The record gives the reactivity of an RNA of 207 nucleotides to DMS and 2A3. Source: RMDB library M2RFPK, as collected in RNAgym. The RNA was probed in 150 mM KOAc, 10 mM MgCl2 and 150 mM bicine (pH 8.5) at 24 C. The 2A3 profile rests on 695 reads. The DMS profile rests on 3,069 reads. For DMS the reverse transcriptase was MarathonRT.

RNA sequence: GGGAACGACUCGAGUAGAGUCGAAAAGGAAGUUCGUGCUUCCGUCGAACGCGAAAGUCGGACGGCGGCCAUGAGUCGCAACGCAAACCCGCGGCAAGUGGAGUUAGCGAGAAGAGACUAGGCUUUGGAAAGUAGGCGGGCUUCGGCCCGCCUACAACAAACUUAAGUUGUUCGCAACUUAAGUUUGAAAAGAAACAACAACAACAAC
Reactivity to DMS in 0.01 (KOAc 150mM, MgCl2 10mM, bicine 150mM(pH8.5), 24C), signal-to-noise 2, nucleotides 027 to 156: g000g010a080a040g060u000u000c100g010u000g020c010u000u000c000c000g010u000c000g020a100a150c090g040c020g030a080a120a120g000u010c000g010g000a170c000g030g010c040g000g050c040c000a100u000g020a210g000u000c000g000c020a150a140c030g000c010a070a100a070c020c020c020g040c000g000g020c060a080a180g020u000g010g000a150g000u000u000a100g010c000g010a120g000a090a130g000a160g000a090c050u000a070g030g000c010u000u000u030g030g000a090a110a180g000u000a030g000g030c050g040g020g010c040u010u000c270g000g000c000c000c020g040c010c000u000a010c000a000a130
Reactivity to 2A3 in 0.01 (KOAc 150mM, MgCl2 10mM, bicine 150mM(pH8.5), 24C), signal-to-noise 1, nucleotides 027 to 156: g030g030a000a020g000u170u240c150g050u230g070c000u030u030c010c000g000u010c000g010a060a040c020g050c030g080a220a060a040g080u190c020g000g000a030c020g070g000c030g000g040c050c030a090u160g030a000g010u000c020g030c060a110a050c050g000c050a030a060a030c010c020c040g040c010g010g050c160a190a110g000u000g000g040a130g040u000u060a020g030c020g000a020g020a120a000g040a020g010a000c000u020a010g020g000c000u070u040u070g010g090a150a060a000g000u010a000g000g000c120g000g020g020c010u040u060c160g040g000c000c070c000g000c010c000u010a000c000a000a000